[RMDB]
Notes
The data come from the RNA Mapping Database (RMDB), library RFMREP. Structure probing data (DMS and 2A3) for a 177-nucleotide construct. For 2A3 the reverse transcriptase was SuperScript II with manganese. For DMS the reverse transcriptase was MarathonRT. The DMS profile rests on 16,304 reads.
RNA sequence: GGGAACGACUCGAGUAGAGUCGAAAACGAGGCCUCAAUUCCGUAGUGCAUUGCAGUGCAUCCUGCCCCUGCAAGCAGUGCGGAAGUGAGGCUGGGGCAAACUAAACAGGAGUUCGCUCCUGUUUAGGAUGUAGAAUGGGUUCGCCCAUUCUACAUCAAAAGAAACAACAACAACAAC
Reactivity to DMS in 0.01 (KOAc 150mM, MgCl2 10mM, bicine 150mM(pH8.5), 24C), signal-to-noise 9, nucleotides 027 to 126: c070g010a140g030g010c000c000u000c000a040a050u000u000c000c000g020u000a020g010u000g000c000a120u000u000g010c010a010g010u000g000c070a160u000c140c150u010g000c040c090c180c010u000g000c000a010a020g000c000a020g010u010g000c000g000g000a010a000g010u000g010a010g000g020c000u000g000g000g010g020c280a080a080a300c010u000a000a010a000c000a010g000g000a020g020u000u020c260g010c000u000c000c000u000g000u000u000u000a000g000
Reactivity to 2A3 in 0.01 (KOAc 150mM, MgCl2 10mM, bicine 150mM(pH8.5), 24C), signal-to-noise 9, nucleotides 027 to 126: c020g020a060g030g000c000c000u010c010a010a040u010u010c000c010g010u020a050g270u020g060c130a300u020u010g000c000a000g010u010g040c010a120u260c020c120u140g010c020c040c000c000u000g000c000a000a010g000c000a040g080u000g000c000g010g000a000a000g000u010g000a010g010g000c000u000g000g000g010g010c060a090a060a040c010u000a000a000a000c000a000g010g010a010g010u070u110c170g080c080u000c000c000u000g000u000u000u000a000g000
The reactions ran in a buffer of 150 mM KOAc, 10 mM MgCl2 and 150 mM bicine (pH 8.5), at 24 C.